Structure probing data (DMS and 2A3) for a 177-nucleotide construct. It was measured as part of the RMDB library RFMREP. DMS adducts were read by reverse transcription with MarathonRT. Conditions: 150 mM KOAc, 10 mM MgCl2 and 150 mM bicine (pH 8.5), 24 C.
RNA sequence: GGGAACGACUCGAGUAGAGUCGAAAAAUGAUGAUUGCUGCAGUUAAAGAGUUCGUAGUCGAAGUGGUUAUAACGGCGUAACAGGCCUUCUCUCAAGGAGGGUUAUGCGCCGUGAUUCCAUGGAAUACCUGUUAAUUCUGUUCGCAGAAUUAACAGGAAAAGAAACAACAACAACAAC
Reactivity to DMS in 0.01 (KOAc 150mM, MgCl2 10mM, bicine 150mM(pH8.5), 24C), signal-to-noise 3, nucleotides 027 to 126: a050u010g010a100u000g000a060u010u000g010c010u000g000c030a040g000u000u010a050a070a070g000a090g010u000u000c100g030u000a070g000u010c040g030a150a100g000u000g000g000u010u000a040u010a180a020c000g010g000c000g040u000a030a050c300a140g000g000c000c000u000u000c000u000c080u040c300a100a300g010g000a020g010g000g030u000u000a080u000g000c000g010c000c010g010u000g000a090u000u000c010c010a010u000g010g000a150a100u000a130
Reactivity to 2A3 in 0.01 (KOAc 150mM, MgCl2 10mM, bicine 150mM(pH8.5), 24C), signal-to-noise 2, nucleotides 027 to 126: a000u090g070a030u010g000a010u000u090g030c000u030g020c010a050g020u080u110a070a050a010g050a020g010u020u190c060g040u070a020g040u010c040g010a090a020g030u010g040g050u120u040a060u030a140a010c010g010g000c020g010u020a100a040c040a050g070g000c000c000u000u000c040u020c000u020c010a000a040g030g000a010g010g000g010u020u060a040u080g010c000g000c000c010g000u000g000a000u010u000c000c010a010u020g030g000a090a070u070a190